[RMDB]
RNA sequence: GGGAACGACUCGAGUAGAGUCGAAAAGCGCAAAUCCACAAACGCCAACGAUGAGCGUUUCGCUGUAGCCGCUUAAGGCAACAGCCGGGGCCGCCUGAGCCCUGUGACCAAAGACGGCUGGCGGGGGUAAUUACUUAUUGCUUCGGCAAUAAGUAAAGCGACUAAAUCAGUUCGCUGAUUUAGUCGCAAAAGAAACAACAACAACAAC
Reactivity to 2A3 in 0.01 (KOAc 150mM, MgCl2 10mM, bicine 150mM(pH8.5), 24C), signal-to-noise 1, nucleotides 027 to 156: g060c030g040c040a060a050a060u060c060c030a040c030a080a070a020c040g000c000c010a050a120c080g100a160u120g040a000g020c020g010u040u110u120c030g020c000u000g000u010a030g000c000c030g040c160u240u220a090a120g010g010c030a020a000c000a020g020c010c000g000g000g000g000c020c070g020c040c040u020g000a020g020c010c000c000u010g080u060g030a010c020c020a020a000a040g020a050c000g000g040c070u050g020g000c000g010g000g020g040g000u110a090a130u070u010a000c000u000u010a000u020u000g010c000u030u010c130g120g000c010a000a000u000a000a000g000u000a000a000a010
An RNA of 207 nucleotides, treated with 2A3 and read out base by base. Source: RMDB library M2RFPK, as collected in RNAgym. The RNA was probed in 150 mM KOAc, 10 mM MgCl2 and 150 mM bicine (pH 8.5) at 24 C.